[RMDB]
RNA sequence: GGGAACGACUCGAGUAGAGUCGAAAAAGAUUUAUAACCGCUUCACACUGACGCCGGAAGGGGAUGAACCGCUUCCCGGUGCCGUUCACUUCCCGAAUAACCCGGAUAUUUUUGAUCUGACCGAAGCAAUACGGAUGUUAUUCGUAACAUCCGUAUUAAAAGAAACAACAACAACAAC
Reactivity to DMS in 0.01 (KOAc 150mM, MgCl2 10mM, bicine 150mM(pH8.5), 24C), signal-to-noise 6, nucleotides 027 to 126: a100g000a120u000u000u010a070u010a130a110c110c090g010c030u000u000c030a110c110a090c090u010g010a050c120g010c030c020g000g010a070a060g000g020g010g010a070u010g000a080a100c020c090g000c050u010u000c050c020c010g010g020u000g000c050c120g000u000u000c030a040c110u000u000c000c000c010g010a110a110u000a090a110c150c030c010g010g000a100u010a040u000u000u010u010u010g000a100u000c040u000g000a110c120c060g010a040a040g010c080
Reactivity to 2A3 in 0.01 (KOAc 150mM, MgCl2 10mM, bicine 150mM(pH8.5), 24C), signal-to-noise 3, nucleotides 027 to 126: a000g080a040u180u190u050a290u090a120a080c030c030g020c030u040u030c020a050c020a020c090u050g070a010c050g000c020c010g010g020a060a050g070g000g000g010a020u060g030a040a080c020c010g010c070u060u010c050c020c000g040g040u040g000c000c010g010u020u020c020a050c080u040u010c000c000c010g020a130a080u050a080a050c040c010c010g000g020a030u040a120u090u210u000u020u150g070a080u030c010u040g040a070c030c060g020a020a000g000c000
Structure probing data (DMS and 2A3) for a 177-nucleotide construct.
For 2A3, 3,736 sequencing reads were counted.
It was measured as part of the RMDB library OK2TST.
The DMS profile rests on 6,711 reads.